[RMDB]
RNA sequence: GGGAACGACUCGAGUAGAGUCGAAAAAAGUAGAAAGAAAUAGAAGACAAUUUGAUUGUUGCCUUGGCUCGGGUUUUUGUCUGUGAUAUUGAGAAUGCAAGAUGAAGGUAAAGAUGUCAUGUAGAGAGAGCAGGAGCUCAGAUUCAGACUGUGGAAAAUCAACUAGAAUCUUCGGAUUCUAGUUGAUAAAAGAAACAACAACAACAAC
Reactivity to DMS in 0.01 (KOAc 150mM, MgCl2 10mM, bicine 150mM(pH8.5), 24C), signal-to-noise 1, nucleotides 027 to 156: a080a090g040u000a040g010a090a060a060g010a050a020a080u000a060g010a050a070g020a100c030a040a070u000u010u020g030a150u000u000g020u000u010g030c000c090u000u000g030g010c010u000c080g010g000g030u010u030u000u000u000g010u000c020u000g000u010g020a080u000a060u000u010g030a120g010a060a050u000g040c080a040a070g090a070u000g000a070a020g000g000u020a040a040a090g010a100u000g010u020c090a020u000g010u010a060g010a140g000a110g000a010g050c050a080g030g000a090g000c050u000c030a030g000a130u000u000c040a090g000a070c040u000g040u000g000g010a080a100a150
Reactivity to 2A3 in 0.01 (KOAc 150mM, MgCl2 10mM, bicine 150mM(pH8.5), 24C), signal-to-noise 2, nucleotides 027 to 156: a000a000g030u050a020g030a080a040a010g000a040a050a040u090a020g030a070a020g030a040c000a000a020u040u020u100g110a160u050u060g020u020u040g000c030c020u000u020g010g000c030u010c010g090g040g010u030u050u020u050u150g090u010c050u000g110u040g050a030u080a010u130u140g020a070g020a060a010u100g020c060a060a000g000a060u040g020a050a040g020g010u040a050a030a000g020a010u030g020u040c030a000u070g010u060a030g030a010g000a000g000a000g060c020a010g020g110a010g020c000u010c040a030g000a020u060u010c000a000g020a050c080u080g030u160g080g140a000a040a290